RNA sequence: GGGAACGACUCGAGUAGAGUCGAAAACUCAGAAGGCAUGAUCACCCCGUCCGAUGCGGAAGUUCGUGCUUCCGUCGAACGCGAAAGUCGGACGGCGGCCAUGAGUCGCAACGCAAAGCCGCGGCAAUAAGCUCGUCGUCGUUCGCGACGACGAGAACAUAGUAAGCCCGUUCGCGGGCUUACUAUGAAAAGAAACAACAACAACAAC
Reactivity to DMS in 0.01 (KOAc 150mM, MgCl2 10mM, bicine 150mM(pH8.5), 24C), signal-to-noise 1, nucleotides 027 to 156: c020u000c020a170g020a130a130g090g000c040a040u010g040a140u010c080a130c030c010c010c000g020u000c000c040g030a060u000g010c050g030g030a020a030g000u000u000c250g010u020g010c010u000u000c000c020g020u030c080g010a070a150c080g030c040g010a110a150a250g040u000c000g050g000a030c000g040g060c050g020g000c040c020a020u000g000a110g040u010c000g020c010a060a010c000g000c020a090a090a250g020c070c020g030c020g020g010c020a140a120u000a040a200g020c020u000c020g000u000c010g000u000c000g040u000u000c180g050c000g030a000c010g010a020c000g010a010g000a040a110
Reactivity to 2A3 in 0.01 (KOAc 150mM, MgCl2 10mM, bicine 150mM(pH8.5), 24C), signal-to-noise 2, nucleotides 027 to 156: c020u040c020a040g050a220a060g100g000c010a020u020g010a030u070c040a040c000c010c010c000g000u000c000c000g000a010u030g010c010g020g000a020a000g030u170u300c230g140u300g090c000u000u000c020c000g040u060c030g080a170a030c080g020c060g130a110a050a000g000u000c000g000g000a000c010g000g000c040g000g000c010c000a010u040g000a010g000u000c000g000c010a040a080c070g050c120a170a090a050g020c070c050g000c050g000g010c010a020a050u140a160a020g040c000u000c000g000u000c000g000u000c000g020u070u040c150g000c000g060a000c000g000a010c010g000a000g000a010a010
An RNA of 207 nucleotides, treated with DMS and 2A3 and read out base by base. 2A3 adducts were read by reverse transcription with SuperScript II with manganese. The RNA was probed in 150 mM KOAc, 10 mM MgCl2 and 150 mM bicine (pH 8.5) at 24 C.